Description: The data come from the RNA Mapping Database (RMDB), library OK3TST. Chemical mapping of a 207-nucleotide RNA with 2A3.

RNA sequence: GGGAACGACUCGAGUAGAGUCGAAAAUCGAGAAGUCUCCUCUAGCUGACUUCUCAGCUGAGAGAGACUAGUCGAAGAGGAGAAGUCGAGAUCUCGAAGGAUCUCGAGAAGUCAGCUUCGAGACUUCGAGACUAGAGGAUCCUAGAGCUAGAGAGAGAUCCGUAGUGGAGUUCGCUCCACUACGGAUAAAAGAAACAACAACAACAAC
Reactivity to 2A3 in 0.01 (KOAc 150mM, MgCl2 10mM, bicine 150mM(pH8.5), 24C), signal-to-noise 1, nucleotides 027 to 156: u090c020g000a020g030a140a000g030u010c000u000c010c000u000c030u100a060g000c020u020g010a030c030u050u090c060u100c130a010g020c020u070g010a040g000a000g000a010g080a060c010u020a030g000u000c020g000a020a030g050a050g000g060a070g020a080a060g020u040c010g040a010g030a240u030c000u010c040g020a060a090g010g000a120u000c000u000c100g020a180g020a020a000g140u100c040a020g060c070u080u040c010g000a010g010a020c000u000u000c000g000a000g000a000c010u030a030g020a030g020g000a020u050c020c080u160a090g020a010g070c040u160a010g030a010g020a040g040a010g040
The reactions ran in a buffer of 150 mM KOAc, 10 mM MgCl2 and 150 mM bicine (pH 8.5), at 24 C. For 2A3, 591 sequencing reads were counted.